[RMDB]
RNA sequence: GGGAACGACUCGAGUAGAGUCGAAAAAAGAUAAUCGCUGAUUACAUUUUAAAGAAUCCACAUAAAAUCAUUGAUAUGACGGUGAAUGAUUUGGCAGAUGUUACGAAUGUUAGUACAGCAUCAAUUGAAAUAUAUCGUGUUUCGACACGAUAUAUUUAAAAGAAACAACAACAACAAC
Reactivity to 2A3 in 0.01 (KOAc 150mM, MgCl2 10mM, bicine 150mM(pH8.5), 24C), signal-to-noise 9, nucleotides 027 to 126: a000a000g170a050u170a060a060u120c070g000c050u020g010a010u020u040a010c010a040u000u020u040u110a120a160a050g080a070a060u060c030c020a050c010a080u230a090a090a030a020u020c020a020u010u080g130a060u140a120u290g170a100c120g140g030u070g080a030a020u020g020a010u020u010u030g060g000c070a050g020a100u030g050u130u050a030c050g030a020a010u030g030u030u040a050g030u080a130c000a010g030c000a020u050c040a080a210u050u200g060
Reactivity to DMS in 0.01 (KOAc 150mM, MgCl2 10mM, bicine 150mM(pH8.5), 24C), signal-to-noise 9, nucleotides 027 to 126: a070a060g010a120u030a080a070u020c160g010c040u010g000a080u010u010a020c030a020u000u000u000u010a060a100a130g010a130a060u010c020c050a100c140a130u050a070a040a020a020u000c010a020u000u010g010a070u010a050u010g010a100c220g010g010u000g010a020a010u010g000a010u000u000u000g010g020c230a070g000a030u040g000u000u010a060c230g000a020a020u010g000u010u010a030g010u020a080c050a020g000c020a080u010c110a050a130u020u010g010